[RMDB]
RNA sequence: GGGAACGACUCGAGUAGAGUCGAAAAGCCACUGUGAGAGGCGCCAAGAGAAUGGCAGUCCUGGGGGAUACAGCCUGGGACUUCGGAUCAGUCGGGGGUGUGUUCAACUCACUGGGUAAGGGCAUUCCCUAUAACCCACCUUCGGGUGGGUUAUAGGAAAAGAAACAACAACAACAAC
Reactivity to DMS in 0.01 (KOAc 150mM, MgCl2 10mM, bicine 150mM(pH8.5), 24C), signal-to-noise 4, nucleotides 027 to 126: g000c010c020a090c050u010g000u000g000a100g010a130g020g010c090g020c010c020a080a130g010a100g000a110a090u010g020g000c070a070g010u000c010c000u000g000g000g020g010g010a170u010a110c300a170g030c010c000u000g000g000g000a010c000u000u010c040g000g000a100u030c050a050g010u000c070g020g000g000g000g010u000g000u010g000u030u040c070a080a100c030u000c030a050c040u020g000g000g030u040a080a090g000g010g010c060a090u000u010c040
Reactivity to 2A3 in 0.01 (KOAc 150mM, MgCl2 10mM, bicine 150mM(pH8.5), 24C), signal-to-noise 5, nucleotides 027 to 126: g030c000c000a040c020u050g020u040g040a060g010a030g030g060c010g020c020c010a110a020g130a000g080a210a160u140g030g000c020a010g020u020c000c000u020g000g000g030g000g010a050u110a300c080a030g150c010c010u040g000g000g030a020c000u060u060c020g020g020a060u060c020a020g080u040c070g060g010g010g010g020u040g000u020g020u040u100c000a060a070c030u020c050a040c030u050g030g030g050u100a080a120g040g020g000c030a020u050u070c000